Conditions: 150 mM KOAc, 10 mM MgCl2 and 150 mM bicine (pH 8.5), 24 C. An RNA of 177 nucleotides, treated with 2A3 and DMS and read out base by base. Reactivities are given for positions 27 through 126. 2A3 adducts were read by reverse transcription with SuperScript II with manganese.
RNA sequence: GGGAACGACUCGAGUAGAGUCGAAAAGAUAUGGACGUGCAAGGGAGAAGAUACAUCGGAAACGAUGUACUUCGAGGAUCUUGAUACGUCCUAAGUCAAAACGUGUUCGUGUUCGCACGAACACGAACGGCGUAAGAAUCUUCGGAUUCUUACGCCGAAAAGAAACAACAACAACAAC
Reactivity to 2A3 in 0.01 (KOAc 150mM, MgCl2 10mM, bicine 150mM(pH8.5), 24C), signal-to-noise 1, nucleotides 027 to 126: g030a000u030a020u100g000g010a020c000g040u020g000c000a020a000g080g000g010a180g000a020a000g040a090u000a010c010a000u030c010g000g000a020a020a030c010g040a000u010g000u000a000c010u030u020c000g040a120g000g010a020u020c010u000u120g080a190u120a220c030g010u000c000c000u040a020a000g020u000c020a000a020a150a210c010g010u030g000u000u000c000g020u020g070u080u110c300g070c110a030c010g000a010a020c000a000c000g020a020a020
Reactivity to DMS in 0.01 (KOAc 150mM, MgCl2 10mM, bicine 150mM(pH8.5), 24C), signal-to-noise 1, nucleotides 027 to 126: g000a030u010a290u060g000g000a000c000g070u000g010c030a020a000g020g000g000a060g010a030a000g000a250u000a000c000a000u010c010g030g000a070a080a230c010g010a020u000g000u000a000c000u000u000c000g010a050g020g000a020u050c010u040u000g000a090u010a030c020g020u000c000c010u010a000a120g010u000c030a100a060a150a160c050g010u010g000u000u000c000g010u000g000u000u000c210g020c090a050c150g000a000a000c000a000c000g000a040a120

The DMS profile rests on 1,313 reads. For 2A3, 3,370 sequencing reads were counted.